Chemical mapping of a 207-nucleotide RNA with 2A3. The reactions ran in a buffer of 150 mM KOAc, 10 mM MgCl2 and 150 mM bicine (pH 8.5), at 24 C. For 2A3 the reverse transcriptase was SuperScript II with manganese. Reactivities are given for positions 27 through 156.
RNA sequence: GGGAACGACUCGAGUAGAGUCGAAAAGGGGUCUGAGGGAGAUCGGAUCAGAGCAACAGCUAUACUGAAGCCUCCACGGUAUAGACAUGCUCUGUAUCACGAUCUUUGAUCUCAGACGGAGGCACCCAAAAGCAUGUUCGCUUCGGCGAACAUGCAAUCUGUGGUAACUCUUCGGAGUUACCACAGAAAAAGAAACAACAACAACAAC
Reactivity to 2A3 in 0.01 (KOAc 150mM, MgCl2 10mM, bicine 150mM(pH8.5), 24C), signal-to-noise 1, nucleotides 027 to 156: g000g010g100g050u010c000u000g000a000g000g000g000a020g010a000u000c030g030g010a010u000c000a000g000a010g060c100a110a090c000a180g010c000u000a000u000a000c020u070g040a110a040g010c010c000u000c000c000a000c000g020g000u020a000u010a010g030a040c070a120u300g000c000u010c000u040g030u090a010u020c100a160c150g000a010u000c000u040u120u020g000a000u010c000u000c010a010g000a000c000g000g000a000g010g000c000a010c000c000c000a050a120a020a040g000c000a000u000g000u000u000c020g000c000u080u060c300g080g000c000g000a000a000c000a000u000g000c000a000a030